[RMDB]
RNA sequence: GGGAACGACUCGAGUAGAGUCGAAAACAAUUCAUCUGCUUCAUCAAAGAAAGUCUGAUAAAACGCGGUAAUAUCCAUGCUCACGGUGUCACCUCUACUGUGCGUCGCGGCUUGUCGGAGAGACCGGUAAACCAUGCUGUUUCGACAGCAUGGUUUAAAAAGAAACAACAACAACAAC
Reactivity to DMS in 0.01 (KOAc 150mM, MgCl2 10mM, bicine 150mM(pH8.5), 24C), signal-to-noise 1, nucleotides 027 to 126: c030a090a120u010u020c060a060u000c030u000g010c040u010u000c030a040u010c160a100a110a130g020a030a040a060g020u020c040u020g000a080u000a080a030a050a070c110g010c030g000g040u010a100a060u010a130u000c020c030a060u000g020c040u010c030a060c050g000g000u010g020u020c030a080c030c130u000c100u000a050c160u020g070u000g000c060g000u010c050g030c140g000g000c040u000u000g030u040c100g030g010a070g020a170g010a070c020c050g010g010
Reactivity to 2A3 in 0.01 (KOAc 150mM, MgCl2 10mM, bicine 150mM(pH8.5), 24C), signal-to-noise 1, nucleotides 027 to 126: c030a010a090u170u210c050a040u000c060u030g020c000u070u060c010a120u000c020a120a100a000g050a080a100a000g020u000c070u020g030a030u030a050a120a010a000c100g040c020g110g000u050a070a110u030a090u120c000c000a030u070g030c040u040c140a010c030g030g030u040g080u100c030a040c040c050u130c070u100a140c060u140g040u030g070c050g010u000c020g000c020g040g000c000u000u100g100u080c010g040g000a020g000a000g060a040c010c040g030g020